[RMDB]
RNA sequence: GGGAACGACUCGAGUAGAGUCGAAAAUGCUGAGCUUUCGAGCUCAGCAGAGGCAAGCUAGCAGCGCAACGAGACAAGACGAGCAUAAGAUCGAGCAUGCUACAAUACGGCACUUCGGUGCCGUAAAAUAAGACCCGUUAUUCGUAACGGGUCUUAUAAAAGAAACAACAACAACAAC
Reactivity to 2A3 in 0.01 (KOAc 150mM, MgCl2 10mM, bicine 150mM(pH8.5), 24C), signal-to-noise 1, nucleotides 027 to 126: u030g020c000u000g020a000g000c000u070u050u190c240g140a000g000c000u000c010a000g010c020a000g000a000g020g070c070a050a060g050c010u060a000g000c050a000g040c020g000c010a060a060c040g020a000g040a060c020a160a040g080a010c050g060a060g020c020a060u060a110a060g040a080u090c050g020a000g030c030a010u020g010c000u020a040c020a050a080u070a050c000g000g020c040a000c010u030u010c210g030g010u020g010c000c000g000u010a000a000a000
Reactivity to DMS in 0.01 (KOAc 150mM, MgCl2 10mM, bicine 150mM(pH8.5), 24C), signal-to-noise 3, nucleotides 027 to 126: u000g020c000u000g010a010g000c000u000u000u010c190g010a020g020c000u000c010a010g020c000a000g010a080g000g030c090a060a070g000c070u010a050g020c020a050g000c070g000c050a070a080c080g000a050g000a100c110a080a070g000a070c130g000a030g010c030a030u020a090a090g000a090u010c070g010a100g030c050a100u000g000c050u010a040c120a120a100u000a010c000g010g000c000a010c000u000u000c180g040g010u000g020c000c010g020u000a000a000a080